[RMDB]
RNA sequence: GGGAACGACUCGAGUAGAGUCGAAAACAACAAGGUAAGGCAUUGAGUGAAUUACAUUAUCGCGCGCCGUGGUAUCCGCUGGUGCCAGUAUUAGGUUUUGUGCUGUGCCUGGUGGCCUGUGUUGGGCCGAGCUUUCUAUUUUCGAAUAGAAAGCUCGAAAAGAAACAACAACAACAAC
Reactivity to 2A3 in 0.01 (KOAc 150mM, MgCl2 10mM, bicine 150mM(pH8.5), 24C), signal-to-noise 1, nucleotides 027 to 126: c030a010a010c020a000a020g070g040u110a080a000g020g000c030a020u050u140g190a040g030u110g100a150a090u170u130a030c070a030u130u100a120u220c040g000c030g000c010g000c100c010g010u000g030g020u120a110u110c070c010g000c150u170g010g030u050g000c020c010a030g070u050a160u100u130a070g100g070u020u030u020u170g060u070g000c000u020g000u040g000c040c000u010g040g050u070g190g000c000c000u170g020u010g030u070u020g050g050g000c050
Reactivity to DMS in 0.01 (KOAc 150mM, MgCl2 10mM, bicine 150mM(pH8.5), 24C), signal-to-noise 2, nucleotides 027 to 126: c040a040a050c070a100a050g010g010u000a110a050g010g000c000a020u000u000g000a060g010u010g000a060a040u010u000a070c070a080u000u010a040u010c050g000c130g020c040g020c010c010g010u000g010g020u020a100u000c040c030g020c030u000g060g010u000g010c020c040a060g020u000a030u000u000a120g010g000u010u000u000u000g020u010g010c020u010g020u000g010c020c000u010g000g030u000g010g010c000c000u010g010u000g010u010u000g010g000g010c090